Chemical mapping of a 170-nucleotide RNA with DMS and 2A3. The DMS profile rests on 37,495 reads. Source: RMDB library 15KLIB, as collected in RNAgym. Values cover nucleotides 27 to 129. The reactions ran in a buffer of 150 mM KOAc, 10 mM MgCl2 and 150 mM bicine (pH 8.5), at 24 C. The 2A3 profile rests on 64,502 reads. DMS adducts were read by reverse transcription with MarathonRT.
[RMDB]
RNA sequence: GGGAACGACUCGAGUAGAGUCGAAAACAUUCCGAGGGGACCGUCCCCUCGGUAAUGGCGAAUGGGACCCACAAACCUCUCUAGAUUCCGAUAGAGAAUCGAGAGGAAAGUGGCUCUCCCUUAGCCAAAGCUUACCUCUUCGGAGGUAAGAAAAGAAACAACAACAACAAC
Reactivity to DMS in 0.01 (KOAc 150mM, MgCl2 10mM, bicine 150mM(pH8.5), 24C), signal-to-noise 7, nucleotides 027 to 129: c090a070u040u030c010c020g040a030g030g000g010g020a230c140c260g000u090c000c000c000c000u000c000g000g000u040a010a050u000g010g030c010g000a140a070u030g000g040g030a000c250c020c000a000c020a030a130a190c030c010u010c020u040c020u040a130g020a030u000u000c000c000g070a180u070a090g000a080g030a050a000u020c020g000a000g020a000g000g030a010a020a060g000u020g010g020c000u040c100u040c010c010c030u000u000a190g000c000c000a040a060a090g040
Reactivity to 2A3 in 0.01 (KOAc 150mM, MgCl2 10mM, bicine 150mM(pH8.5), 24C), signal-to-noise 9, nucleotides 027 to 129: c030a070u110u040c000c000g010a000g010g010g000g030a070c050c050g300u300c010c000c000c000u000c000g000g000u000a010a030u030g010g010c010g020a030a020u070g000g000g000a020c030c100c000a010c010a010a240a050c000c000u020c000u000c020u060a100g000a010u000u000c010c020g150a230u130a210g200a030g000a050a000u010c020g000a000g000a000g000g000a080a040a010g010u000g000g000c000u020c000u010c000c000c000u000u020a000g000c000c000a040a020a000g020